[RMDB]
This 207-nucleotide RNA was probed chemically with 2A3 and DMS.
High 2A3 reactivity points to a flexible backbone, as in loops and unpaired stretches.
For 2A3, 4,499 sequencing reads were counted.
RNA sequence: GGGAACGACUCGAGUAGAGUCGAAAAGACGUGGAGGUAUCGCGCCCUCCUUUGCGCGUAAGUACGUCGAAAUUCGGUGCUGUGGAUCGCACCGUCUGAUCCAUUAGAUAUCCGCUCUGUGCCGCGGUUGGGCAUUUACACUUACCCGAAAGGGGAAGCUAUAUAGCUGGUUCGCCAGCUAUAUAGCAAAAGAAACAACAACAACAAC
Reactivity to 2A3 in 0.01 (KOAc 150mM, MgCl2 10mM, bicine 150mM(pH8.5), 24C), signal-to-noise 5, nucleotides 027 to 156: g030a000c020g020u060g030g060a060g060g060u080a050u160c010g010c010g010c050c010c010u140c020c070u070u090u070g010c020g000c010g010u030a050a060g040u020a010c020g010u010c020g030a090a010a050u110u070c020g000g000u020g010c030u050g010u090g100g040a050u050c030g010c040a080c050c010g020u000c040u040g030a030u020c000c010a030u080u170a040g080a110u070a060u130c030c020g000c020u020c030u100g050u040g010c020c010g050c030g050g000u070u040g050g010g000c030a020u040u060u110a050c080a010c020u070u080a050c000c000c000g050a090a030a030g010g000g010g000a010a010
Reactivity to DMS in 0.01 (KOAc 150mM, MgCl2 10mM, bicine 150mM(pH8.5), 24C), signal-to-noise 3, nucleotides 027 to 156: g020a070c000g020u000g020g000a080g020g010u000a090u000c050g000c040g070c040c030c010u010c070c020u000u000u010g010c010g000c030g030u000a070a130g000u000a030c030g000u000c020g030a080a090a130u000u000c020g040g010u000g010c020u000g030u000g000g030a060u000c050g040c020a300c080c080g000u010c020u010g010a070u000c030c010a120u000u000a080g000a160u000a070u010c020c020g020c060u010c040u000g030u000g000c000c020g020c030g010g000u000u000g020g000g040c070a080u000u010u000a070c100a090c070u010u010a210c000c000c000g010a080a110a200g000g000g000g000a040a110
For 2A3 the reverse transcriptase was SuperScript II with manganese. Reactivities are given for positions 27 through 156.